[RMDB]
RNA sequence: GGGAACGACUCGAGUAGAGUCGAAAACUCACCUUUGAGCUCACGGACAUAGUGCACUGUCGUAUGGCAGCGCCCAGCCAGCGCAAAGCGGUUCUGUCAACCCUUGUUGGCAGGUACGGCCGCCGUACCCAUAAUCCUCGUUCGCGAGGAUUAUGGGAAAAGAAACAACAACAACAAC
Reactivity to 2A3 in 0.01 (KOAc 150mM, MgCl2 10mM, bicine 150mM(pH8.5), 24C), signal-to-noise 4, nucleotides 027 to 126: c010u020c020a090c010c050u060u080u120g080a050g030c030u040c050a070c050g040g050a020c030a090u200a070g040u060g070c030a020c070u040g010u080c030g100u230a180u300g030g000c010a020g020c020g000c030c000c000a010g000c000c000a030g020c020g000c060a060a030a000g010c020g020g000u090u130c010u000g000u020c000a000a020c110c100c130u040u300g010u020u010g000g020c000a000g050g000u050a050c070g030g000c020c020g000c000c000g020u060a060
Reactivity to DMS in 0.01 (KOAc 150mM, MgCl2 10mM, bicine 150mM(pH8.5), 24C), signal-to-noise 4, nucleotides 027 to 126: c030u000c020a150c150c090u000u000u020g010a100g000c020u000c080a090c110g000g010a070c090a080u010a100g020u000g000c030a040c060u000g010u010c030g020u000a060u020g020g010c020a040g010c070g020c020c020c030a080g000c060c050a080g000c040g000c060a030a080a070g000c020g020g010u000u010c010u020g010u000c020a020a020c010c300c190u000u020g000u000u000g000g020c000a000g000g020u010a050c270g000g000c000c030g020c010c090g000u010a110